[RMDB]
RNA sequence: GGGAACGACUCGAGUAGAGUCGAAAAGGUUUCAUGUUGGCUGUGCUUCACUAACAUGAGCUGUGUAUUUACAGGGCUCUGAAGUCUGAAGGGGUCUGCGAGUCUGUAGUGUAUGGCCUGCCCUUCAGGACAAGCAUUUAUUCGUAAAUGCUUGUCCAAAAGAAACAACAACAACAAC
Reactivity to 2A3 in 0.01 (KOAc 150mM, MgCl2 10mM, bicine 150mM(pH8.5), 24C), signal-to-noise 1, nucleotides 027 to 126: g070g010u030u180u120c040a060u040g000u050u060g090g010c090u030g010u100g110c120u130u150c000a000c000u030a040a010c000a020u050g020a020g000c020u030g070u070g000u100a050u030u060u030a050c030a040g040g110g000c000u000c020u070g140a110a050g070u030c020u010g070a110a050g030g030g020g030u000c040u030g100c030g030a030g030u000c010u070g090u090a040g010u050g020u090a060u090g050g010c000c010u040g020c050c020c000u000u080c020a000
Reactivity to DMS in 0.01 (KOAc 150mM, MgCl2 10mM, bicine 150mM(pH8.5), 24C), signal-to-noise 3, nucleotides 027 to 126: g000g020u000u010u000c020a030u000g000u000u000g000g020c150u010g020u000g010c090u010u000c040a110c030u000a030a050c040a050u000g000a030g020c030u000g000u010g010u000a070u000u000u010a050c050a080g010g000g010c020u000c030u000g010a110a080g000u000c090u010g000a090a040g000g000g000g000u010c030u000g000c140g000a050g010u000c020u000g000u010a050g020u000g010u020a070u010g000g020c020c030u000g000c020c010c000u000u010c130a130